[RMDB]
RNA sequence: GGGAACGACUCGAGUAGAGUCGAAAAUAGCGCUAAUAAUAGUAGUAGUAAUAAUAACGUUUCCACUGUGCCUUCUUCAAUGAUGCAUUCGUCCACUUUAAAUGGGACUUCAGGUCUAGGCGGCGAACGCUGAUAUUUACUUCGGUAAAUAUCAGCGAAAAGAAACAACAACAACAAC
Reactivity to 2A3 in 0.01 (KOAc 150mM, MgCl2 10mM, bicine 150mM(pH8.5), 24C), signal-to-noise 2, nucleotides 027 to 126: u040a000g020c030g000c010u040a010a020u170a220a140u060a170g070u020a020g040u000a030g040u030a040a100u070a200a040u130a190a020c020g000u000u030u030c020c000a040c040u080g060u070g040c010c010u050u010c010u050u030c050a070a170u150g040a050u120g060c040a020u030u080c010g020u000c020c010a100c030u060u110u160a080a100a110u110g030g000g000a000c000u020u020c040a010g000g060u000c030u030a070g070g000c000g000g000c060g060a060a010
Reactivity to DMS in 0.01 (KOAc 150mM, MgCl2 10mM, bicine 150mM(pH8.5), 24C), signal-to-noise 4, nucleotides 027 to 126: u010a080g020c040g030c030u000a050a030u020a080a070u000a120g010u000a070g000u010a080g020u000a060a090u010a080a060u020a080a240c100g000u000u000u000c000c000a100c090u000g000u000g000c010c020u000u000c020u000u010c090a040a090u000g000a080u010g000c110a160u000u010c100g010u000c010c020a080c080u000u010u010a030a090a130u000g000g000g030a060c020u010u010c120a040g000g000u000c020u000a080g000g020c070g010g010c040g010a050a080